[RMDB]
This 207-nucleotide RNA was probed chemically with DMS and 2A3. For 2A3 the reverse transcriptase was SuperScript II with manganese. The data come from the RNA Mapping Database (RMDB), library OK3TST. Reactivities are given for positions 27 through 156. The 2A3 profile rests on 1,990 reads. As a SHAPE reagent, 2A3 marks flexible, mostly unpaired nucleotides at the ribose 2'-OH.

RNA sequence: GGGAACGACUCGAGUAGAGUCGAAAACAUUGUACACCGAGAUGCACAGGAGCCUGUAGAAACUAAGACAUUUGGAGCAGCAGGAUGCCAUUGAGAAGAGGUUGGGAAUGUUAAAGCUAAGCCAUGUGAACCAAGCUCAUCCCAACAGCUGCCAAAACGUCGAAAAUAGUUUCGACUAUUUUCGACGAAAAGAAACAACAACAACAAC
Reactivity to DMS in 0.01 (KOAc 150mM, MgCl2 10mM, bicine 150mM(pH8.5), 24C), signal-to-noise 2, nucleotides 027 to 156: c100a130u010u020g060u000a090c040a070c000c020g000a100g030a160u000g080c010a110c040a110g000g000a060g020c030c060u010g060u000a090g010a100a040a080c060u010a090a100g020a050c060a110u000u020u020g040g010a150g030c000a100g010c010a090g000g000a130u010g000c000c030a090u010u000g000a130g010a040a040g000a040g010g020u000u000g020g020g020a090a110u010g020u010u010a050a040a120g000c040u000a070a070g040c020c030a050u000g000u010g000a080a100c040c020a060a090g010c000u010c070a110u000c020c010c000a060a050c050a110g010c030u000g000c000c040a050a080a070a120
Reactivity to 2A3 in 0.01 (KOAc 150mM, MgCl2 10mM, bicine 150mM(pH8.5), 24C), signal-to-noise 3, nucleotides 027 to 156: c040a030u060u180g080u130a020c030a030c050c030g040a040g020a130u050g030c050a040c010a050g080g000a040g050c010c010u050g010u070a040g070a070a070a080c080u080a130a030g100a050c020a080u070u070u170g030g010a040g030c000a000g000c010a010g020g030a040u040g010c010c040a050u050u080g040a030g020a110a020g020a050g000g050u040u040g020g010g000a050a090u050g030u070u180a170a050a000g000c020u030a070a000g000c040c030a070u120g080u060g070a020a030c020c010a010a020g020c000u020c020a010u020c000c010c010a000a040c020a010g010c040u040g000c000c010a000a110a030a030